[RMDB]
RNA sequence: GGGAACGACUCGAGUAGAGUCGAAAAAUUUUUGGGUUUAGGUGUUCUGCUUUGAGGGGCUUGCUCCGUUCUGCUUUACAAUUAACAACUAAUUUAGAACUGUGACGAUCACGGGGAAUCCAACUGUACGCGAUCUAGUUUUCGAACUAGAUCGCGUAAAAGAAACAACAACAACAAC
Reactivity to 2A3 in 0.01 (KOAc 150mM, MgCl2 10mM, bicine 150mM(pH8.5), 24C), signal-to-noise 1, nucleotides 027 to 126: a010u150u000u000u000u000g000g120g000u000u000u100a000g040g000u070g010u000u030c000u010g130c020u150u000u000g000a000g000g110g000g000c020u040u000g000c000u000c000c000g000u070u000c000u020g040c010u100u130u030a000c070a060a080u170u090a180a060c010a120a120c010u220a070a070u120u070u040a080g000a040a100c000u100g030u030g120a030c060g000a010u120c010a000c000g070g000g000g060a000a000u040c000c040a030a100c000u030g110u040